[RMDB]
RNA sequence: GGGAACGACUCGAGUAGAGUCGAAAAAACGCGUACACGCGAUCGUAGGCCGUGCCCAGCAACAUCACGCGAAAAAAGGAACACACCAGACGCGCCUGGCUCUGGCAUCGCAACGUGCAAGGCGAGCGCAGGGACGCGUUAGCGUUGGCGCUGUCGCUGGGGAAACAUUAUUCGUAAUGUUUCCCCAAAAAGAAACAACAACAACAAC
Reactivity to 2A3 in 0.01 (KOAc 150mM, MgCl2 10mM, bicine 150mM(pH8.5), 24C), signal-to-noise 2, nucleotides 027 to 156: a000a020c130g010c030g020u140a100c060a010c140g070c010g010a100u120c150g030u050a100g050g070c020c000g000u030g000c030c000c000a010g120c060a020a070c000a050u130c040a010c050g000c000g100a100a000a050a050a050a000g040g020a090a060c100a020c000a010c090c050a040g060a130c010g020c000g030c040c030u020g050g010c010u020c070u140g050g000c000a100u020c060g030c010a010a100c060g050u070g000c070a030a080g050g010c020g040a030g020c050g000c040a030g050g000g040a020c000g000c000g010u040u040a080g040c000g040u050u040g030g000c010g000c020u050g020u030c030g000c020
Reactivity to DMS in 0.01 (KOAc 150mM, MgCl2 10mM, bicine 150mM(pH8.5), 24C), signal-to-noise 1, nucleotides 027 to 156: a090a050c020g000c020g000u000a150c070a070c040g010c050g000a100u000c070g040u000a190g010g020c020c040g020u000g010c030c000c040a170g000c030a070a080c050a120u000c030a020c060g000c000g050a000a030a080a070a120a110g030g030a050a050c080a050c120a060c000c040a130g000a100c030g020c000g010c020c000u010g020g020c050u000c010u010g000g000c040a100u010c020g000c040a060a030c030g000u030g000c050a070a110g000g000c020g010a090g020c060g040c030a080g010g020g010a010c030g100c030g020u000u000a020g000c070g000u000u000g000g010c060g030c020u000g000u000c010g030c040
Source: RMDB library OK3TST, as collected in RNAgym. An RNA of 207 nucleotides, treated with 2A3 and DMS and read out base by base. The reactions ran in a buffer of 150 mM KOAc, 10 mM MgCl2 and 150 mM bicine (pH 8.5), at 24 C. 2A3 adducts were read by reverse transcription with SuperScript II with manganese.